An RNA of 207 nucleotides, treated with DMS and 2A3 and read out base by base. For 2A3 the reverse transcriptase was SuperScript II with manganese. The RNA was probed in 150 mM KOAc, 10 mM MgCl2 and 150 mM bicine (pH 8.5) at 24 C.

[RMDB]
RNA sequence: GGGAACGACUCGAGUAGAGUCGAAAAGGGCAUAGCGGGCCGCCGGAUGUUAUUGACAUCACCGCGCACAGCGCUGAUUUUCGCGAAGAGAUGAACGUCAGGCGGGAGGUGUCCUGGCAUGAUGUGACGGUAGAGCGGGUGGUAUCGGCCAUAGCCCCGUCUGGGAAUAAUUCGUUAUUCCCAGACGAAAAGAAACAACAACAACAAC
Reactivity to DMS in 0.01 (KOAc 150mM, MgCl2 10mM, bicine 150mM(pH8.5), 24C), signal-to-noise 1, nucleotides 027 to 156: g020g010g000c060a100u000a100g020c050g000g040g030c000c000g020c010c010g010g020a060u000g030u000u000a170u000u000g020a100c010a040u000c000a050c000c000g000c030g040c040a060c070a100g000c000g050c050u010g010a090u000u020u000u030c060g000c110g050a230a200g000a140g000a060u010g010a060a030c030g020u000c040a090g020g000c050g010g000g020a040g040g020u010g000u000c000c040u000g010g020c060a040u020g030a070u000g030u010g020a080c040g030g020u020a050g010a100g050c000g010g010g030u020g010g020u000a060u000c040g020g000c010c020a090u000a110g020c000c010c000
Reactivity to 2A3 in 0.01 (KOAc 150mM, MgCl2 10mM, bicine 150mM(pH8.5), 24C), signal-to-noise 4, nucleotides 027 to 156: g030g000g000c040a050u070a070g080c050g040g030g000c020c000g010c020c020g050g000a010u010g020u080u080a260u120u270g070a000c000a010u010c010a010c030c010g000c010g000c030a030c030a070g050c080g010c110u040g090a130u060u050u050u120c050g010c040g060a150a050g040a020g030a110u140g020a060a050c020g010u020c020a020g050g000c030g040g030g000a060g050g070u100g030u030c000c000u010g020g000c030a080u070g050a100u060g030u020g040a090c030g000g010u070a040g020a050g070c080g020g020g010u050g020g010u080a180u170c020g040g000c010c010a050u070a030g010c000c000c010
It was measured as part of the RMDB library OK3TST.